[RMDB]
An RNA of 207 nucleotides, treated with DMS and 2A3 and read out base by base. It was measured as part of the RMDB library M2RFPK. Conditions: 150 mM KOAc, 10 mM MgCl2 and 150 mM bicine (pH 8.5), 24 C. The 2A3 profile rests on 2,356 reads. DMS adducts were read by reverse transcription with MarathonRT.
RNA sequence: GGGAACGACUCGAGUAGAGUCGAAAAGAGUCAUACAACCCCAGAACCCAUUCCUUAUACCUUGAGUAUUGCUGAAUUCAGUUUAGCGUGCAUGCUCUUGGCUAUUCUCAUAGUGAUUGUCAAAUUUAAAACGACGAUGACUUCGGUCAUCGUCGAACAGAAGUAUAAUCUUCGGAUUAUACUUCUGAAAAGAAACAACAACAACAAC
Reactivity to DMS in 0.01 (KOAc 150mM, MgCl2 10mM, bicine 150mM(pH8.5), 24C), signal-to-noise 2, nucleotides 027 to 156: g010a090g000u000c040a140u000a080c070a040a130c010c000c010c030a220g020a120a190c010c000c020a140u000u000c010c020u010u000a170u010a030c030c030u010u010g000a090g030u000a040u010u010g000c000u000g020a050a090u000u000c140a150g030u000u010u000a020g010c080g010u010g030c100a150u000g020c010u000c020u000u000g030g010c030u000a090u010u000c050u010c000a130u010a090g000u000g010a120u000u000g030u010c010a050a120a110u000u000u010a030a080a160a190c020g000a020c010g000a010u010g000a000c000u000u000c300g050g000u000c000a000u010c000g020u000c000g000a020a110
Reactivity to 2A3 in 0.01 (KOAc 150mM, MgCl2 10mM, bicine 150mM(pH8.5), 24C), signal-to-noise 4, nucleotides 027 to 156: g030a000g070u050c030a030u080a180c040a100a160c040c000c030c010a010g060a040a030c000c030c050a080u080u130c010c020u110u130a060u020a110c010c000u000u000g000a010g010u020a040u150u130g000c010u030g030a140a120u190u150c060a120g150u060u060u170a020g020c070g030u070g060c040a000u010g010c000u000c000u000u010g010g000c000u040a040u070u050c070u000c070a100u100a080g100u060g080a220u060u090g000u050c020a030a100a080u090u170u250a090a170a020a030c000g000a000c010g010a010u000g000a000c000u020u030c230g060g000u010c010a000u000c000g000u000c000g000a000a000